Notes
Chemical mapping of a 177-nucleotide RNA with 2A3. For 2A3 the reverse transcriptase was SuperScript II with manganese. The data come from the RNA Mapping Database (RMDB), library RFM100. The 2A3 profile rests on 271 reads.
[RMDB]
RNA sequence: GGGAACGACUCGAGUAGAGUCGAAAAAGUGCGCAUGUACGCAUGCGCACAGGACUAUGAUAGGAUAACCUAGAGUCUCUGAACCAUUUCGUGUUUGUACAAACAAUGCUCUUUGUCUGAGUCAGAAGCCUCUCUCCUCGUUCGCGAGGAGAGAGGCAAAAGAAACAACAACAACAAC
Reactivity to 2A3 in 0.01 (KOAc 150mM, MgCl2 10mM, bicine 150mM(pH8.5), 24C), signal-to-noise 1, nucleotides 027 to 126: a000g010u000g000c000g000c010a000u000g120u120a000c270g000c000a000u000g000c000g000c000a000c000a020g000g000a000c060u060a000u120g060a000u070a120g000g010a100u190a180a300c000c000u000a020g000a000g000u150c070u090c060u270g150a150a120c010c010a000u000u170u220c130g020u120g000u080u080u000g040u090a050c060a060a210a000c040a040a040u210g000c000u040c080u000u070u140g000u000c080u060g020a020g120u180c000a090g080a060a000